[RMDB]
RNA sequence: GGGAACGACUCGAGUAGAGUCGAAAAAAUUAACGCAUCUUAUCAGCGCGAUAUGGCGAUCGCCCUUCCGGGUAUGGUUGCAGACACUUCCAAGUACAACAUUGACGGCGCUUGUGUCGUUAACGAAGGUGAUGUUUUUGUUGGCGCUGCCGUACAAGAAAUCAUGCUAUUUCGAUAGCAUGAUUUCAAAAGAAACAACAACAACAAC
Reactivity to DMS in 0.01 (KOAc 150mM, MgCl2 10mM, bicine 150mM(pH8.5), 24C), signal-to-noise 2, nucleotides 027 to 156: a040a060u000u000a090a020c040g040c010a120u000c050u000u000a110u010c050a110g020c030g010c080g020a190u010a100u010g030g010c030g000a040u000c020g000c010c010c010u000u000c200c100g010g010g020u010a030u010g080g010u000u000g020c040a200g000a140c040a050c030u000u010c010c000a070a080g000u010a090c040a110a120c040a130u000u000g000a040c010g030g020c000g030c210u010u000g040u000g040u010c010g000u010u010a030a050c050g000a060a050g040g010u000g020a110u000g010u000u000u000u010u000g010u010u010g010g000c040g030c000u000g020c020c050g000u010a090c090a100a240
Reactivity to 2A3 in 0.01 (KOAc 150mM, MgCl2 10mM, bicine 150mM(pH8.5), 24C), signal-to-noise 3, nucleotides 027 to 156: a000a030u300u110a110a050c060g020c030a050u010c070u140u110a090u180c050a050g040c060g050c060g090a030u040a040u150g140g000c020g040a030u050c030g000c000c000c000u160u120c050c080g100g000g000u050a140u180g040g000u020u040g020c000a010g040a050c030a040c040u140u140c070c000a140a000g070u030a080c030a080a050c000a130u010u100g040a020c010g010g030c000g040c090u210u080g120u100g000u100c000g000u030u020a040a050c070g030a040a060g040g050u090g030a120u090g060u020u020u020u050u040g050u020u040g000g040c020g000c070u040g020c020c060g020u080a040c030a160a020
The record gives the reactivity of an RNA of 207 nucleotides to DMS and 2A3. High 2A3 reactivity points to a flexible backbone, as in loops and unpaired stretches. For DMS, 5,632 sequencing reads were counted.